This 177-nucleotide RNA was probed chemically with 2A3 and DMS. It was measured as part of the RMDB library OK2TST. Values are in units of 0.01, from 0 to 300, in steps of 10. The RNA was probed in 150 mM KOAc, 10 mM MgCl2 and 150 mM bicine (pH 8.5) at 24 C. 2A3 is a SHAPE reagent: it acylates the 2'-hydroxyl of flexible nucleotides of all four kinds.
RNA sequence: GGGAACGACUCGAGUAGAGUCGAAAAUCAGCGGGACUCGAUGAUCAUCUCGCCAGAGUGCCCGACUCACAGGCGAGACGGGGACUGUCUCUGUUCUGUGACGGUAUCAAGGAGGUCGCGGCAGCGCGCUCUCUGGAAUUUUCGAAUUCCAGAGAGCAAAAGAAACAACAACAACAAC
Reactivity to 2A3 in 0.01 (KOAc 150mM, MgCl2 10mM, bicine 150mM(pH8.5), 24C), signal-to-noise 3, nucleotides 027 to 126: u050c010a020g030c010g000g050g040a050c010u000c110g160a170u130g030a060u110c020a050u020c020u000c010g050c020c000a040g030a010g040u090g100c040c020c000g030a050c020u000c010a030c000a000g010g030c010g000a010g010a010c020g010g020g080g150a080c070u080g020u050c000u000c030u070g080u190u070c020u000g010u020g020a000c030g000g040u080a050u250c040a050a070g090g000a030g030g010u050c020g020c030g090g030c050a020g110c020g060c030
Reactivity to DMS in 0.01 (KOAc 150mM, MgCl2 10mM, bicine 150mM(pH8.5), 24C), signal-to-noise 3, nucleotides 027 to 126: u010c090a150g020c030g010g000g010a070c080u000c040g000a180u000g000a060u000c110a160u000c070u000c000g030c080c090a110g000a070g000u000g010c060c010c010g010a130c110u000c010a030c070a050g010g000c020g000a000g020a020c000g010g020g020g000a140c100u010g030u000c010u010c020u010g030u010u010c000u000g000u000g000a020c070g000g020u010a140u020c070a080a120g020g010a070g010g000u000c020g030c060g000g020c110a100g010c060g020c180